[RMDB]
RNA sequence: GGGAACGACUCGAGUAGAGUCGAAAAAUUACUUAGGCAGAUAGCAAGGGUAUGGGAGUCCUCGGUAAGGCUUUUCUUCUUAAUGAAAAGCAACCCCAAAUCAUUUUCCAACGAAGAGCAGCCUGCAAGACGAUGUAAAUUUCGAUUUACAUCGUCUAAAAGAAACAACAACAACAAC
Reactivity to DMS in 0.01 (KOAc 150mM, MgCl2 10mM, bicine 150mM(pH8.5), 24C), signal-to-noise 3, nucleotides 027 to 126: a090u010u010a040c020u010u010a080g020g010c020a070g020a110u000a090g010c040a060a080g010g010g000u000a040u000g000g000g000a100g010u000c020c060u000c080g010g010u000a040a080g000g000c000u000u000u000u000c000u020u010c230u010u010a060a070u020g000a000a010a010a030g010c050a090a110c120c020c010c050a060a070a110u040c060a090u000u010u000u010c040c050a100a190c170g010a050a050g000a060g020c040a060g010c050c010u000g010c170a110
Chemical mapping of a 177-nucleotide RNA with DMS. For DMS, 2,274 sequencing reads were counted. The data come from the RNA Mapping Database (RMDB), library OK2TRN. Conditions: 150 mM KOAc, 10 mM MgCl2 and 150 mM bicine (pH 8.5), 24 C.